Notes: An RNA of 177 nucleotides, treated with 2A3 and DMS and read out base by base. It was measured as part of the RMDB library OK1LIB. 2A3 adducts were read by reverse transcription with SuperScript II with manganese.
[RMDB]
RNA sequence: GGGAACGACUCGAGUAGAGUCGAAAAUGAAGAUCUGUUGUAUCAGACCAUCCGCCAGCCGGGCGCGCAGUCGUCCGAGCAGACGACGCUGCCUUCAGGGCUGCAAAUCGGUACCGGCGUGCGUCCGAUUAUGAUGGUAUUUCGAUACCAUCAUAAUAAAAGAAACAACAACAACAAC
Reactivity to 2A3 in 0.01 (KOAc 150mM, MgCl2 10mM, bicine 150mM(pH8.5), 24C), signal-to-noise 9, nucleotides 027 to 126: u130g030a050a040g070a140u040c040u070g050u120u100g130u190a100u190c010a010g030a030c010c010a030u040c030c040g040c040c020a020g060c060c010g020g000g000c010g010c010g000c050a080g010u040c010g120u140c000c010g020a030g010c070a030g020a050c070g010a020c060g010c030u060g000c020c000u140u190c110a140g040g060g000c000u010g000c010a040a050a090u050c010g010g030u090a070c020c010g010g000c010g000u030g000c010g010u010c010c000g000
Reactivity to DMS in 0.01 (KOAc 150mM, MgCl2 10mM, bicine 150mM(pH8.5), 24C), signal-to-noise 9, nucleotides 027 to 126: u020g000a090a110g000a040u010c040u010g010u000u010g010u010a060u010c010a070g000a100c080c040a070u020c040c040g010c050c040a090g010c200c000g010g000g000c020g000c040g000c070a110g030u000c010g000u010c000c010g010a090g010c150a100g010a080c130g000a080c090g010c010u000g000c020c010u010u030c240a120g010g010g010c000u010g000c040a040a110a110u010c010g000g000u030a050c110c020g020g010c030g020u000g000c030g000u000c010c020g000